The record gives the reactivity of an RNA of 177 nucleotides to 2A3 and DMS. Source: RMDB library OK2TST, as collected in RNAgym. For 2A3, 775 sequencing reads were counted. For 2A3 the reverse transcriptase was SuperScript II with manganese.

RNA sequence: GGGAACGACUCGAGUAGAGUCGAAAAUAGUCACGAUAUUGACGAUAUUGAUGAUAGUAAUGAUAGUGACGAUAUCGACCGUGACCUUGAUACGGAGCUGGAGUUGCUAACUAUGAUGAAUGCGCUAAGCGAAUCUCUGGUUCGCCAGAGAUUCGCUAAAAGAAACAACAACAACAAC
Reactivity to 2A3 in 0.01 (KOAc 150mM, MgCl2 10mM, bicine 150mM(pH8.5), 24C), signal-to-noise 1, nucleotides 027 to 126: u110a010g050u000c030a030c030g030a030u010a020u270u200g110a030c030g010a030u060a040u050u070g220a250u000g030a000u070a060g020u120a130a000u060g070a090u000a100g030u020g010a010c010g000a010u000a010u040c040g040a090c000c040g080u050g030a010c000c020u020u000g050a040u060a140c000g030g000a000g050c000u000g000g000a000g030u040u000g000c000u040a100a000c050u010a070u080g080a030u080g050a050a080u080g020c090g030c140u070a090
Reactivity to DMS in 0.01 (KOAc 150mM, MgCl2 10mM, bicine 150mM(pH8.5), 24C), signal-to-noise 2, nucleotides 027 to 126: u000a130g030u000c010a020c090g010a090u020a020u010u010g010a100c110g050a120u000a060u030u000g030a110u010g000a050u010a080g020u000a020a230u020g000a270u010a030g020u000g000a200c020g010a230u000a000u000c030g010a100c120c020g000u000g000a060c230c110u020u000g020a080u000a020c060g050g030a160g010c070u010g000g000a300g000u000u000g000c010u000a050a030c070u000a000u010g010a040u000g010a090a050u000g040c150g010c090u010a040